[RMDB]
RNA sequence: GGGAACGACUCGAGUAGAGUCGAAAAAGACCUUCCAUCAAUAUCUUGUUACUGUAGGCCACUCAGAUAAGAGCUCAAAUAGCCAGGGCUAGAAGGAAACUGCUUUGUGAUCUACAGAGAGUUUUCAACUACUACCUGAGUUCGCUCAGGUAGUAGUAAAAGAAACAACAACAACAAC
Reactivity to 2A3 in 0.01 (KOAc 150mM, MgCl2 10mM, bicine 150mM(pH8.5), 24C), signal-to-noise 2, nucleotides 027 to 126: a000g090a000c010c000u000u000c040c000a060u020c020a050a100u100a110u210c070u120u120g130u140u160a090c010u020g020u070a010g000g000c020c000a000c010u040c000a000g010a030u150a180a020g030a000g030c000u020c080a090a210a130u080a050g050c040c060a160g040g210g000c020u030a020g050a120a060g060g000a010a020a030c030u090g000c000u030u020u020g000u030g030a090u040c000u020a000c010a000g010a000g010a020g040u060u000u040u090c030a050
Reactivity to DMS in 0.01 (KOAc 150mM, MgCl2 10mM, bicine 150mM(pH8.5), 24C), signal-to-noise 3, nucleotides 027 to 126: a090g000a080c040c070u010u010c020c010a300u000c050a080a030u010a080u010c070u000u010g030u020u010a120c030u000g000u000a050g010g010c040c030a040c020u010c060a010g010a050u000a070a060g000a210g010c020u020c040a040a100a100u020a070g020c050c100a100g020g010g020c030u000a050g010a210a160g000g000a030a030a090c000u000g000c030u000u000u000g010u000g020a060u000c080u000a020c020a040g000a100g000a070g010u000u000u010u000c050a100
An RNA of 177 nucleotides, treated with 2A3 and DMS and read out base by base.
2A3 adducts were read by reverse transcription with SuperScript II with manganese.
For DMS, 2,087 sequencing reads were counted.
Conditions: 150 mM KOAc, 10 mM MgCl2 and 150 mM bicine (pH 8.5), 24 C.